An RNA of 177 nucleotides, treated with 2A3 and DMS and read out base by base. It was measured as part of the RMDB library OK1LIB.

[RMDB]
RNA sequence: GGGAACGACUCGAGUAGAGUCGAAAAAUUGAGCUGAUUGAGGUCUGGAAAAUGACUCCUCUGGUUCCGGAAAUAGAACAAUGUUCUUUGCCUUAAAUUCAGGCUCCCUGGCCUUGAGGAACGCUCACGCUACUCCUAGGUUCGCCUAGGAGUAGCGAAAAGAAACAACAACAACAAC
Reactivity to 2A3 in 0.01 (KOAc 150mM, MgCl2 10mM, bicine 150mM(pH8.5), 24C), signal-to-noise 3, nucleotides 027 to 126: a000u100u050g000a010g010c020u020g070a140u100u110g060a090g000g070u100c060u070g080g010a010a080a140a130u130g050a020c040u020c010c000u000c020u020g040g000u170u100c020c020g050g020a030a050a140u260a050g040a040a000c120a190a200u300g030u020u000c000u090u100u090g010c000c000u130u090a170a140a130u230u060c080a000g000g000c000u070c030c000c030u010g010g010c000c000u030u050g000a030g000g030a060a030c040g000c000u020c010a020
Reactivity to DMS in 0.01 (KOAc 150mM, MgCl2 10mM, bicine 150mM(pH8.5), 24C), signal-to-noise 1, nucleotides 027 to 126: a060u040u000g010a020g000c000u000g010a270u010u000g000a200g030g000u000c000u000g000g000a030a070a100a170u030g000a010c100u010c050c030u010c070u000g000g010u010u000c020c020g000g110a090a140a080u040a000g020a040a120c020a060a150u080g020u000u000c000u000u000u000g030c000c000u000u000a010a150a130u090u160c230a050g030g000c030u050c120c000c070u000g000g000c170c000u000u000g000a020g030g000a120a090c190g000c020u000c050a140
The DMS profile rests on 1,052 reads. Values are in units of 0.01, from 0 to 300, in steps of 10. Values cover nucleotides 27 to 126.